[RMDB]
RNA sequence: GGGAACGACUCGAGUAGAGUCGAAAAAGACUUGUAUUCGUACAAGUCUACAGAAAUUUCGCUAGCACACGAUCACACCUAGCGUUCUGAAUAACGAUCGAACAACGUGUCAAUUCGUUGACACGAAAGAUACUCGAAUGUUCGCAUUCGAGUAUCUAAAAGAAACAACAACAACAAC
Reactivity to 2A3 in 0.01 (KOAc 150mM, MgCl2 10mM, bicine 150mM(pH8.5), 24C), signal-to-noise 4, nucleotides 027 to 126: a000g000a000c000u000u000g000u010a010u040u080c240g010u020a010c000a000a000g000u000c000u010a020c000a030g210a040a150a070u030u050u030c000g000c000u010a000g030c090a020c020a020c120g020a020u010c010a050c020a020c090c010u000a000g000c000g010u020u000c010u030g070a120a070u140a080a040c060g010a030u040c020g030a060a020c030a020a050c030g000u000g010u000c000a010a020u060u070c160g080u080u010g010a000c000a000c000g010a020a010
Reactivity to DMS in 0.01 (KOAc 150mM, MgCl2 10mM, bicine 150mM(pH8.5), 24C), signal-to-noise 3, nucleotides 027 to 126: a010g000a010c000u010u010g010u000a040u010u020c190g020u010a010c010a010a010g010u010c000u000a080c190a140g000a040a080a120u000u000u000c000g010c010u000a000g000c170a150c140a070c030g000a000u020c020a080c180a220c170c010u000a020g000c000g010u000u020c010u010g010a050a050u000a060a110c200g020a020u010c000g000a200a060c250a050a110c010g040u000g010u000c000a000a010u000u020c220g020u000u000g000a000c000a000c000g000a020a050
Chemical mapping of a 177-nucleotide RNA with 2A3 and DMS. The reactions ran in a buffer of 150 mM KOAc, 10 mM MgCl2 and 150 mM bicine (pH 8.5), at 24 C. DMS (dimethyl sulfate) methylates the pairing face of unpaired adenines and cytosines.